[RMDB]
RNA sequence: GGGAACGACUCGAGUAGAGUCGAAAAUUCUAUAGCCAUGAUCACACCAGCGUGCCACAAUAACUAAAUUCUGAAGGGAAUGUGAGUAUGUCUGCAAUGUUCAGAAAAAAAGUCAGAUCUGUGAGUGCUUAGCGCACUUAUUCGUAAGUGCGCUAAGAAAAGAAACAACAACAACAAC
Reactivity to DMS in 0.01 (KOAc 150mM, MgCl2 10mM, bicine 150mM(pH8.5), 24C), signal-to-noise 2, nucleotides 027 to 126: u020u010c040u010a040u010a090g020c000c000a080u000g010a030u000c030a030c070a090c220c040a060g010c070g010u010g000c040c010a070c050a060a060u020a080a090c110u000a050a070a090u010u000c050u000g010a140a110g020g010g010a090a050u010g020u010g010a110g000u000a040u000g000u010c020u000g010c090a070a080u010g030u010u000c040a080g020a000a000a040a070a060a080a100g010u000c040a020g020a070u000c050u000g000u010g000a100g000u000g010
Reactivity to 2A3 in 0.01 (KOAc 150mM, MgCl2 10mM, bicine 150mM(pH8.5), 24C), signal-to-noise 2, nucleotides 027 to 126: u080u000c010u010a130u090a120g040c000c050a080u080g030a050u020c020a010c010a000c160c020a020g020c000g000u050g000c010c010a030c040a100a050u080a130a030c050u090a030a040a150u140u040c090u070g070a120a060g000g010g060a020a010u080g020u010g020a030g050u030a030u120g100u070c050u000g000c030a060a050u060g020u030u070c050a020g160a040a100a010a000a000a000a000g120u080c020a000g000a090u020c020u080g080u040g090a080g030u110g010